[RMDB]
RNA sequence: GGGAACGACUCGAGUAGAGUCGAAAAUUCGCUUGGUGAUUCAGGUAAUGGCAUCCAGUGAGUCACUCGCUCAUGCUUGAUUAAACGCGUGUCCUGCUUUGAGUUCUUUGCCUCAAUUACUGGCUUCCACCACAAUUUCCUUCGGGAAAUUGUGGUGAAAAGAAACAACAACAACAAC
Reactivity to 2A3 in 0.01 (KOAc 150mM, MgCl2 10mM, bicine 150mM(pH8.5), 24C), signal-to-noise 1, nucleotides 027 to 126: u040u010c060g030c060u030u100g070g030u120g000a130u300u000c000a010g020g070u200a130a120u080g040g040c010a020u000c010c010a000g000u000g020a000g030u030c000a040c050u000c010g000c010u030c000a050u110g020c060u100u010g060a120u040u230a090a200a010c090g020c070g060u020g110u050c000c000u040g090c060u120u070u180g080a150g060u170u130c020u120u060u080g010c000c000u000c010a050a180u130u100a040c040u090g000g000c030u050u010c040
Reactivity to DMS in 0.01 (KOAc 150mM, MgCl2 10mM, bicine 150mM(pH8.5), 24C), signal-to-noise 1, nucleotides 027 to 126: u000u020c050g000c010u000u010g030g010u000g000a020u000u000c080a040g020g000u010a070a080u000g000g040c040a070u000c040c160a030g030u010g000a070g000u000c050a050c160u000c040g020c070u010c050a050u000g010c090u020u020g010a140u000u010a050a030a110c230g000c100g010u000g030u020c010c020u000g000c020u000u020u000g000a050g000u000u000c080u000u000u000g000c060c000u000c120a070a070u000u010a150c090u000g010g000c030u000u000c050